[RMDB]
RNA sequence: GGGAACGACUCGAGUAGAGUCGAAAAGAAAUACACAACUUACUACAAACUGAUCUUAUUUGAAUUGAGGGUUACUGUAGCUACUACUGUAGCUACCGUAAUCCUCACAGUGUGAACUUAAAUUAAAUCGGCUUGUGGAAUUCGUUCCACAAGCCGAAAAAGAAACAACAACAACAAC
Reactivity to 2A3 in 0.01 (KOAc 150mM, MgCl2 10mM, bicine 150mM(pH8.5), 24C), signal-to-noise 1, nucleotides 027 to 126: g000a140a000a010u140a000c010a000c000a160a100c000u180u200a030c000u000a010c040a160a190a060c020u080g000a010u020c090u060u250a110u180u020u250g050a130a100u000u200g000a000g000g000g000u010u000a000c000u000g000u010a000g030c000u030a030c070u000a010c040u140g030u020a000g000c000u000a000c000c000g000u000a000a000u000c000c000u010c000a000c000a000g050u040g000u000g090a060a000c000u000u110a010a010a010u130u120a040a040a040
Chemical mapping of a 177-nucleotide RNA with 2A3. The reactions ran in a buffer of 150 mM KOAc, 10 mM MgCl2 and 150 mM bicine (pH 8.5), at 24 C. Values are in units of 0.01, from 0 to 300, in steps of 10. The 2A3 profile rests on 366 reads. Source: RMDB library RFM100, as collected in RNAgym.